Chemical mapping of a 207-nucleotide RNA with DMS and 2A3. For DMS the reverse transcriptase was MarathonRT. For 2A3, 6,632 sequencing reads were counted.

[RMDB]
RNA sequence: GGGAACGACUCGAGUAGAGUCGAAAAGGUAGUAGCUUAGUAUUGAUAUCUACAACUACAGCUAGUAGUAGUGUUUACAGUAGAAUUUAAAGGCGGUAUAGAUUCUACAUACAAAGAGUAUCGCCCCCAUUGGGCCAAAAACUGUCACCCAGCAACGUACAAUGUGUAAUUUCGAUUACACAUUGUAAAAAGAAACAACAACAACAAC
Reactivity to DMS in 0.01 (KOAc 150mM, MgCl2 10mM, bicine 150mM(pH8.5), 24C), signal-to-noise 4, nucleotides 027 to 156: g010g030u000a110g020u000a030g020c040u000u000a090g020u000a300u000u000g010a190u000a110u000c030u000a120c050a050a070c010u000a020c010a260g020c050u000a070g020u000a110g010u010a050g010u000g000u000u000u010a060c080a130g010u010a040g010a050a030u000u010u000a040a070a110g000g010c020g050g020u010a300u000a070g010a040u000u000c010u000a010c010a160u010a100c060a080a110a140g000a110g010u000a060u000c000g010c020c000c010c030c070a230u010u000g030g000g030c040c040a030a060a020a060a050c090u010g000u000c030a050c020c010c000a160g010c100a070a060c090g000
Reactivity to 2A3 in 0.01 (KOAc 150mM, MgCl2 10mM, bicine 150mM(pH8.5), 24C), signal-to-noise 7, nucleotides 027 to 156: g040g010u050a030g010u020a010g040c020u100u030a020g030u080a170u110u140g060a060u070a090u200c030u060a060c030a090a010c010u030a010c020a040g070c130u100a030g030u020a010g010u000a010g020u080g040u130u250u110a070c060a010g000u010a000g010a040a030u040u040u070a160a120a040g030g000c020g010g020u030a030u010a050g030a020u030u000c010u030a020c000a070u140a050c050a040a180a010g050a010g020u030a030u060c020g000c000c000c000c010c020a060u040u120g020g000g000c030c020a050a030a020a050a070c050u020g020u050c020a040c020c010c000a020g040c040a040a030c030g050